RNA sequence: GGGAACGACUCGAGUAGAGUCGAAAACACGGGACUGAUGCAUCUGUGGGAUUUCAUAGAGGCGUACGUACAGAAUCCUACUAGCAAGCCGUUGACGGCGCAGCUGUUCUUGAUAGUUCAGCACAGUCGCGACAACGAAACGUUUCGCGAGGCCAUGCUGCUUCGAUUUUUUCGAAAAUCGAAGCAGAAAAGAAACAACAACAACAAC
Reactivity to 2A3 in 0.01 (KOAc 150mM, MgCl2 10mM, bicine 150mM(pH8.5), 24C), signal-to-noise 3, nucleotides 027 to 156: c110a020c000g020g040g030a020c050u110g080a100u080g030c010a080u040c090u110g000u050g010g000g040a030u000u150u130c050a090u140a150g110a090g090g000c080g030u240a060c080g020u080a040c070a040g040a010a000u020c020c000u020a040c000u010a010g020c010a070a010g000c000c010g000u020u090g070a110c050g000g000c010g010c010a020g000c000u010g020u010u000c010u020u070g100a120u100a150g000u000u030c010a020g010c010a010c030a080g070u050c020g000c020g010a020c070a060a000c010g110a240a090a040c120g000u020u010u000c000g010c000g020a010g060g000c020c010a040u080g030
Reactivity to DMS in 0.01 (KOAc 150mM, MgCl2 10mM, bicine 150mM(pH8.5), 24C), signal-to-noise 1, nucleotides 027 to 156: c040a090c030g030g020g020a020c040u010g020a160u020g000c000a130u000c050u000g020u030g000g090g040a120u000u020u020c000a060u000a070g020a130g000g070c090g000u000a080c020g030u000a220c170a170g020a090a010u000c010c000u010a020c050u010a130g020c050a070a200g000c010c020g020u000u010g000a200c050g000g010c020g000c090a300g030c000u000g050u000u000c000u000u020g030a260u000a050g000u010u010c030a030g000c020a060c060a100g000u000c050g020c000g020a050c100a070a090c010g000a090a080a040c100g020u000u000u000c040g040c000g020a120g030g050c000c050a140u010g000

The record gives the reactivity of an RNA of 207 nucleotides to 2A3 and DMS.
For 2A3 the reverse transcriptase was SuperScript II with manganese.
DMS adducts were read by reverse transcription with MarathonRT.
It was measured as part of the RMDB library OK3TST.
Values cover nucleotides 27 to 156.